[RMDB]
RNA sequence: GGGAACGACUCGAGUAGAGUCGAAAAAAGAACGCCCUGCCCCAAAGGGGGGAGAAAGGGGAAAAGGGGAUCUCUCAGGAAAACGACACCCCAGAAGACGAGGAAUCUGUCGAGCUGCGGAUCCAGAUCCACAUACUCUAUUCGUAGAGUAUGUGGAAAAAGAAACAACAACAACAAC
Reactivity to DMS in 0.01 (KOAc 150mM, MgCl2 10mM, bicine 150mM(pH8.5), 24C), signal-to-noise 5, nucleotides 027 to 126: a070a080g020a100a090c130g000c000c010c000u000g010c020c000c000c020a110a110a140g010g010g020g010g000g000a070g010a040a060a060g020g020g010g000a030a060a110a090g000g000g010g010a030u000c020u010c030u010c030a040g000g000a040a050a080a140c030g010a060c050a070c040c010c010c030a090g000a080a090g010a110c070g000a070g000g010a170a050u010c120u000g010u000c020g000a120g010c020u000g010c300g010g000a070u000c010c010a140g010a170
Reactivity to 2A3 in 0.01 (KOAc 150mM, MgCl2 10mM, bicine 150mM(pH8.5), 24C), signal-to-noise 2, nucleotides 027 to 126: a000a000g080a050a000c050g070c000c000c000u020g040c000c000c000c000a090a170a120g180g040g000g000g060g030a080g160a060a060a000g060g000g010g010a040a140a010a020g130g020g010g020a020u000c160u010c000u010c060a010g120g010a040a120a000a020c000g020a010c000a050c000c010c000c030a040g120a110a030g060a020c050g030a090g080g010a040a080u090c030u080g010u020c010g000a050g040c020u030g010c000g020g000a010u000c000c000a020g010a130

The record gives the reactivity of an RNA of 177 nucleotides to DMS and 2A3.
Source: RMDB library OK2TRN, as collected in RNAgym.
The reactions ran in a buffer of 150 mM KOAc, 10 mM MgCl2 and 150 mM bicine (pH 8.5), at 24 C.